[RMDB]
RNA sequence: GGGAACGACUCGAGUAGAGUCGAAAAAUUUUCAACCAAGCAUGGCAAAACGUUUUAUCGACCAUCAAUUUGUAUUACAACUAUUGGAUUUAUUCGAUUCGGAGGAUCCACGUGAACGUGAUUUCCACGAUGCGUACUCAUUCGUGAGUACGCAUCGAAAAGAAACAACAACAACAAC
Reactivity to 2A3 in 0.01 (KOAc 150mM, MgCl2 10mM, bicine 150mM(pH8.5), 24C), signal-to-noise 3, nucleotides 027 to 126: a000u040u060u030u070c030a060a000c000c020a020a030g080c060a120u050g010g030c000a020a050a020a040c020g010u040u080u060u050a280u110c020g060a090c040c000a030u070c040a070a050u050u000u120g060u050a140u090u220a040c030a060a010c000u030a030u030u060g070g010a060u080u070u010a140u030u090c040g050a070u130u030c020g040g050a040g090g020a040u050c040c060a000c020g060u090g100a120a000c010g010u050g030a150u060u040u040c020c010a010
Reactivity to DMS in 0.01 (KOAc 150mM, MgCl2 10mM, bicine 150mM(pH8.5), 24C), signal-to-noise 2, nucleotides 027 to 126: a080u020u000u000u000c070a130a100c070c030a080a160g030c220a130u000g000g020c100a080a100a150a030c140g000u010u000u000u000a090u000c010g010a020c080c170a090u000c070a060a050u000u000u000g000u000a060u010u010a110c170a070a050c120u000a070u010u000g000g000a170u000u000u000a050u000u000c020g000a060u000u000c030g010g020a090g000g000a090u000c020c000a020c060g020u000g010a050a060c060g010u000g000a210u000u000u000c000c060a240